[RMDB]
The record gives the reactivity of an RNA of 177 nucleotides to 2A3 and DMS. For 2A3 the reverse transcriptase was SuperScript II with manganese. The 2A3 profile rests on 1,291 reads. The DMS profile rests on 829 reads. DMS adducts were read by reverse transcription with MarathonRT. Reactivities are rounded to 0.1 and cut off at 0 and 3.

RNA sequence: GGGAACGACUCGAGUAGAGUCGAAAAAGAAACUCUGUUCUUAAGUUGCUUGUGAAUACGAGCCACUUGAAACUGAAAGAAACAAAGAAACAAUAUCAGUAUAAAAUUUUAUCAAAUUAUACUACAACCAUGUUUACGUGUUCGCACGUAAACAUGGAAAAGAAACAACAACAACAAC
Reactivity to 2A3 in 0.01 (KOAc 150mM, MgCl2 10mM, bicine 150mM(pH8.5), 24C), signal-to-noise 2, nucleotides 027 to 126: a010g010a020a000a010c040u000c030u040g030u030u000c080u030u030a020a000g000u000u000g000c000u000u010g010u020g150a190a090u300a240c030g000a010g000c000c030a000c000u000u000g010a050a010a000c020u050g040a010a000a100g020a040a070a000c070a010a160a000g000a000a160a030c060a090a040u000a030u120c030a010g030u000a020u130a160a150a200a220u070u070u130u160a030u140c030a010a030a040u040u000a060u040a040c020u020a010c010a070a020
Reactivity to DMS in 0.01 (KOAc 150mM, MgCl2 10mM, bicine 150mM(pH8.5), 24C), signal-to-noise 1, nucleotides 027 to 126: a080g010a190a230a050c000u000c070u010g000u000u000c070u060u000a040a070g000u050u000g000c080u000u000g000u000g000a200a090u030a000c160g030a090g080c090c050a030c000u010u010g020a000a000a050c000u000g000a000a070a000g000a120a030a000c080a090a040a150g000a040a070a120c040a110a020u000a090u020c070a010g000u000a000u000a000a000a050a300u000u050u030u190a050u070c010a000a010a270u000u000a000u000a010c040u000a160c300a050a250